Overview
This 177-nucleotide RNA was probed chemically with DMS and 2A3. The 2A3 profile rests on 22,628 reads. The DMS profile rests on 9,423 reads. The reactions ran in a buffer of 150 mM KOAc, 10 mM MgCl2 and 150 mM bicine (pH 8.5), at 24 C. For 2A3 the reverse transcriptase was SuperScript II with manganese.
[RMDB]
RNA sequence: GGGAACGACUCGAGUAGAGUCGAAAAGACACGACGGAGACGUCGUGUCAAGUCCAGUGCGAAAGCACUGGACAAAUAAGGGCUGCAUUUCUCGCUGACUUACAGCCCCAAACAAAUAAUGUCAGCAUGAUUACUACGUAUUCGUACGUAGUAAUCAAAAAGAAACAACAACAACAAC
Reactivity to DMS in 0.01 (KOAc 150mM, MgCl2 10mM, bicine 150mM(pH8.5), 24C), signal-to-noise 6, nucleotides 027 to 126: g020a020c000a010c010g000a010c000g000g000a250g000a240c000g030u000c000g030u010g010u000c010a030a080g010u010c000c000a010g020u000g000c000g000a120a060a170g030c000a010c000u000g000g010a000c000a010a050a090u000a120a170g000g000g000c010u000g000c270a090u010u010u000c070u000c160g000c000u000g000a030c000u000u000a060c010a010g000c000c000c010c140a020a030a110c110a050a040a080u000a030a050u010g010u000c000a010g020c020a290
Reactivity to 2A3 in 0.01 (KOAc 150mM, MgCl2 10mM, bicine 150mM(pH8.5), 24C), signal-to-noise 6, nucleotides 027 to 126: g000a000c000a000c010g000a000c000g020g020a060g020a050c000g000u000c000g000u000g000u000c000a010a000g000u000c000c000a000g000u000g010c010g070a140a040a020g000c000a000c000u010g000g010a000c000a000a020a000u110a060a090g010g010g000c010u010g000c030a130u030u150u060c130u090c090g000c010u010g000a000c000u030u050a020c010a000g000c000c000c010c040a030a090a010c030a010a040a020u160a040a050u110g010u010c000a000g000c010a030